[RMDB]
RNA sequence: GGGAACGACUCGAGUAGAGUCGAAAAGUUUUGCGGCAUCUUCUGCUCUGGUGGCUGCUGCUCCGGCAGCAGUACUGCUUUGCGCCGCCAGUGAUGCGCUGGUAUCAGAUGCGGCGGCGUGAGUGGAACAUUAGAGAACCUUCGGGUUCUCUAAUGUAAAAGAAACAACAACAACAAC
Reactivity to DMS in 0.01 (KOAc 150mM, MgCl2 10mM, bicine 150mM(pH8.5), 24C), signal-to-noise 4, nucleotides 027 to 126: g010u000u010u010u010g010c160g000g000c080a070u010c040u000u000c030u000g000c020u010c020u010g020g030u010g000g010c010u000g010c000u000g010c000u000c240c170g010g020c010a010g000c000a020g030u010a050c000u000g010c030u010u010u000g040c020g010c000c010g030c000c010a070g010u010g000a040u000g000c010g000c200u030g020g010u000a040u000c000a080g010a150u040g010c110g000g010c000g000g000c000g020u000g010a010g030u010g000g010a140
Reactivity to 2A3 in 0.01 (KOAc 150mM, MgCl2 10mM, bicine 150mM(pH8.5), 24C), signal-to-noise 8, nucleotides 027 to 126: g060u060u060u100u190g070c040g030g000c020a070u010c060u100u000c000u030g000c010u010c020u080g080g030u040g050g000c000u000g000c000u000g000c000u010c050c120g110g000c000a000g000c000a010g000u010a020c010u020g020c000u050u120u150g000c000g000c010c000g000c000c000a090g030u050g060a050u060g000c080g040c200u210g150g020u080a050u120c010a030g070a220u140g150c070g030g000c000g000g000c000g000u010g000a010g000u030g000g010a020
Notes
The record gives the reactivity of an RNA of 177 nucleotides to DMS and 2A3. The reactions ran in a buffer of 150 mM KOAc, 10 mM MgCl2 and 150 mM bicine (pH 8.5), at 24 C. It was measured as part of the RMDB libraries RFM100 and RFMREP. Values cover nucleotides 27 to 126. 2A3 adducts were read by reverse transcription with SuperScript II with manganese.